The data come from the RNA Mapping Database (RMDB), library M2RFPK. This 207-nucleotide RNA was probed chemically with 2A3 and DMS. For 2A3 the reverse transcriptase was SuperScript II with manganese.
RNA sequence: GGGAACGACUCGAGUAGAGUCGAAAAGCUCUGUAAUGGGAUGGGAUCCGAAGCCCCAUUGAGGGAUAAUACAGGCUCUCCCAUCCAACUCCUAUACCAACACGUCCUCGUCGUACAGAGUGGUAACUAAGGUAUAGCUCCUUCGGGAGCUAUACAACCAUGAUUUCAAGUUCGCUUGAAAUCAUGGAAAAGAAACAACAACAACAAC
Reactivity to 2A3 in 0.01 (KOAc 150mM, MgCl2 10mM, bicine 150mM(pH8.5), 24C), signal-to-noise 4, nucleotides 027 to 156: g000c010u010c010u010g030u050a140a130u180g120g000g020a000u000g000g030g010a050u220c010c010g020a080a030g030c000c000c000c030a130u150u180g060a300g030g020g020a020u090a180a070u150a180c150a030g000g000c000u010c000u010c020c010c010a000u000c000c000a000a000c010u010c010c000u060a080u070a140c030c050a060a070c030a010c110g090u100c030c030u120c040g090u030c040g010u040a020c010a010g000a000g010u080g030g030u080a120a090c090u050a140a050g100g000u000a000u000a000g000c000u000c000c000u030u010c070g080g000g000a000g000c000u010a000u000a000c000a000a000
Reactivity to DMS in 0.01 (KOAc 150mM, MgCl2 10mM, bicine 150mM(pH8.5), 24C), signal-to-noise 2, nucleotides 027 to 156: g020c000u000c020u000g000u020a040a180u000g020g000g020a020u000g000g000g000a110u000c040c030g000a180a140g040c000c000c040c050a300u000u010g010a140g000g000g010a080u000a070a100u010a110c110a220g000g020c040u000c060u010c000c010c000a060u000c030c000a030a050c050u010c010c010u000a130u000a300c090c060a080a100c060a110c100g030u000c010c040u010c030g010u000c060g000u000a090c000a070g000a070g020u000g000g000u000a040a110c080u000a100a090g030g010u000a000u000a010g000c000u000c000c000u000u000c300g040g020g040a010g050c000u000a000u000a000c000a060a100